[RMDB]
RNA sequence: GGGAACGACUCGAGUAGAGUCGAAAAAAAUCUACCGCUUCAGCAAUAACAGUUUCCUGUGAUUGAUAGUAACGAAGAGUUUCAGCCACAUCUUGCGCCAGUCCGUCGACGGUCAGCGAGUCGCUUAACAGGAUCGCGUAAUCACUGGACGGAACAACUUACUUGUCCGGUUCGCCGGACAAGUAAGAAAAGAAACAACAACAACAAC
Reactivity to 2A3 in 0.01 (KOAc 150mM, MgCl2 10mM, bicine 150mM(pH8.5), 24C), signal-to-noise 1, nucleotides 027 to 156: a000a000a000u140c110u120a130c060c030g000c040u030u070c060a060g000c030a080a100u120a170a070c010a100g010u050u090u030c000c000u070g010u040g010a090u100u070g020a020u070a260g130u100a070a060c090g030a040a000g050a040g030u040u060u080c060a050g040c020c000a070c000a050u020c030u040u030g020c030g060c020c050a070g000u000c000c010g080u090c080g090a020c040g010g110u040c080a000g000c020g000a000g130u040c010g030c110u060u040a040a020c000a010g060g000a000u020c020g000c020g040u020a050a050u070c000a010c030u070g000g040a090c010g010g040a030a010c030a000a010

Chemical mapping of a 207-nucleotide RNA with 2A3. The reactions ran in a buffer of 150 mM KOAc, 10 mM MgCl2 and 150 mM bicine (pH 8.5), at 24 C. 2A3 adducts were read by reverse transcription with SuperScript II with manganese. Reactivities are given for positions 27 through 156.